[RMDB]
RNA sequence: GGGAACGACUCGAGUAGAGUCGAAAAAGUUUAGAUUUCGAUCUAAACUAGACCACUAAGAGGUUGACGAGUGACUACGACGCAUCUAGUAGAAUGCGCCCAGCUGUGAGCAGUUCGCUGCUCACAAUUGAAGGCUACUUUUCGAAGUAGCCUUCAAAAAAGAAACAACAACAACAAC
Reactivity to DMS in 0.01 (KOAc 150mM, MgCl2 10mM, bicine 150mM(pH8.5), 24C), signal-to-noise 3, nucleotides 027 to 126: a040g000u010u000u010a010g000a030u000u010u010c190g020a020u000c000u010a000a000a000c000u000a070g000a260c040c000a090c130u020a110a090g010a110g020g000u000u010g020a100c050g010a120g000u000g000a090c060u000a060c070g000a070c090g000c040a000u010c040u000a110g000u010a090g020a090a030u000g000c070g010c000c000c070a100g020c170u000g010u010g010a010g000c000a010g010u010u010c220g010c010u000g000c010u000c000a010c010a000a070
Source: RMDB library M2PK50, as collected in RNAgym. Structure probing data (DMS) for a 177-nucleotide construct. For DMS the reverse transcriptase was MarathonRT. Conditions: 150 mM KOAc, 10 mM MgCl2 and 150 mM bicine (pH 8.5), 24 C. The DMS profile rests on 1,889 reads.